[RMDB]
RNA sequence: GGGAACGACUCGAGUAGAGUCGAAAACGAUCACCAGGAUGCGGCCCUCGAAGGCGACGCACUUGGUGGACUUGGCGUAGGCGUCGCCGCCGACCGGGUCGUAGAUCACGUCGGCGCCGCGGCCGCAUGCAUUUACGCUCUUCGGAGCGUAAAUGCAAAAAGAAACAACAACAACAAC
Reactivity to 2A3 in 0.01 (KOAc 150mM, MgCl2 10mM, bicine 150mM(pH8.5), 24C), signal-to-noise 1, nucleotides 027 to 126: c010g030a110u060c000a000c030c010a000g070g000a030u040g030c070g000g070c040c010c000u090c120g090a120a060g020g010c020g030a020c000g000c000a100c050u020u020g010g010u020g000g020a060c090u100u200g100g030c070g150u070a030g050g050c000g000u030c000g000c010c020g000c010c010g030a030c020c070g070g000g030u040c040g040u070a020g000a030u000c030a020c060g010u020c010g000g030c020g030c020c080g010c060g000g000c000c000g000c010a000
Reactivity to DMS in 0.01 (KOAc 150mM, MgCl2 10mM, bicine 150mM(pH8.5), 24C), signal-to-noise 2, nucleotides 027 to 126: c090g020a110u050c030a080c050c020a080g000g010a090u000g010c000g000g030c010c030c010u020c180g010a180a140g020g000c000g000a040c010g010c010a090c050u010u000g000g010u000g050g000a100c140u000u000g010g000c040g000u000a070g010g010c000g000u000c020g000c020c020g040c010c010g000a040c060c190g020g020g010u000c010g010u010a040g010a030u000c000a090c120g000u000c000g000g010c010g010c130c120g010c300g020g010c020c000g020c040a060